[RMDB]
RNA sequence: GGGAACGACUCGAGUAGAGUCGAAAAGCACCGGGCCUUGACAGAUUCUCAAUAAAUCCUUGGCAAUAUCGAUACCGGUUCGACGGUGUCCCGACAGUGCAAGGAGAACGGUCCGCCAUGGCUGUGCAGUAUUUAAUGGAUUCGUCCAUUAAAUACUAAAAGAAACAACAACAACAAC
Reactivity to 2A3 in 0.01 (KOAc 150mM, MgCl2 10mM, bicine 150mM(pH8.5), 24C), signal-to-noise 9, nucleotides 027 to 126: g010c000a010c030c000g060g040g010c020c010u060u060g030a020c020a040g070a150u260u050c080u040c070a060a070u160a170a120a040u020c010c000u020u040g130g020c000a030a060u100a040u100c020g000a000u010a030c010c000g060g000u100u190c080g080a080c010g020g000u010g010u010c010c060c000g030a040c050a040g060u080g050c000a000a010g020g010a020g020a070a020c050g010g010u010c000c010g000c010c010a090u090g070g000c030u030g030u040g020c030
Reactivity to DMS in 0.01 (KOAc 150mM, MgCl2 10mM, bicine 150mM(pH8.5), 24C), signal-to-noise 9, nucleotides 027 to 126: g010c030a060c050c300g020g010g010c010c010u000u000g020a040c070a060g010a070u000u000c070u010c130a120a120u010a080a080a120u000c010c010u000u000g020g020c010a040a060u000a050u000c040g010a030u000a020c010c000g000g000u010u010c240g000a140c010g010g000u000g010u000c010c120c060g010a030c100a030g010u000g000c010a020a030g010g000a030g010a050a100c200g010g010u000c010c030g010c030c020a030u000g010g010c030u000g010u000g010c080
Structure probing data (2A3 and DMS) for a 177-nucleotide construct. For DMS the reverse transcriptase was MarathonRT. 2A3 adducts were read by reverse transcription with SuperScript II with manganese. Values cover nucleotides 27 to 126. Source: RMDB library OK2TST, as collected in RNAgym. The reactions ran in a buffer of 150 mM KOAc, 10 mM MgCl2 and 150 mM bicine (pH 8.5), at 24 C.